[RMDB]
An RNA of 207 nucleotides, treated with 2A3 and DMS and read out base by base.
RNA sequence: GGGAACGACUCGAGUAGAGUCGAAAAUGAGCGAGUUUGUGCGUUUGCGAGUUGCCUGGAAAUUAUGGUAUCGCAUUGUUCAAAGCUGGAACAAUGCCAUAAAUGGCACAUGCCAAAUAUUUUCGUUGGCAAAGGCAUAAGCUAGAAAAAGGUAUGAAUAUUUAUAGGCGUUCGCGCCUAUAAAUAUAAAAGAAACAACAACAACAAC
Reactivity to 2A3 in 0.01 (KOAc 150mM, MgCl2 10mM, bicine 150mM(pH8.5), 24C), signal-to-noise 3, nucleotides 027 to 156: u210g010a000g080c080g010a010g010u040u040u030g030u040g020c090g060u030u030u060g030c020g000a180g010u090u060g040c010c010u040g040g010a050a040a030u060u060a030u040g060g020u060a020u080c030g000c020a000u000u000g000u010u010c030a110a210a130g110c130u150g080g000a010a010c000a000a000u010g010c010c000a020u100a140a140a130u060g010g000c030a060c010a060u070g010c000c010a010a120a010u060a050u010u090u040u070c030g050u090u040g010g010c000a010a010a000g040g000c020a020u030a070a020g010c010u020a020g170a040a100a040a000a000g140g010u210a090u260g110a060
Reactivity to DMS in 0.01 (KOAc 150mM, MgCl2 10mM, bicine 150mM(pH8.5), 24C), signal-to-noise 1, nucleotides 027 to 156: u000g020a100g010c040g010a080g010u000u000u000g010u010g020c060g030u010u000u020g020c020g010a120g090u000u010g020c010c030u000g030g010a100a050a060u000u000a210u030g010g030u000a060u000c050g000c020a020u000u000g000u010u000c030a090a100a240g040c200u000g040g000a020a010c010a010a000u000g040c000c040a050u000a030a080a100u000g010g000c070a080c120a090u010g010c040c020a010a060a040u000a050u000u000u010u000c010g010u010u000g040g010c050a050a050a080g010g020c030a030u010a020a100g010c000u010a050g000a030a120a080a080a080g000g020u000a070u000g000a110
Reactivities are given for positions 27 through 156. For DMS, 2,861 sequencing reads were counted. For 2A3 the reverse transcriptase was SuperScript II with manganese. The RNA was probed in 150 mM KOAc, 10 mM MgCl2 and 150 mM bicine (pH 8.5) at 24 C. The data come from the RNA Mapping Database (RMDB), library OK3TST. For 2A3, 1,297 sequencing reads were counted.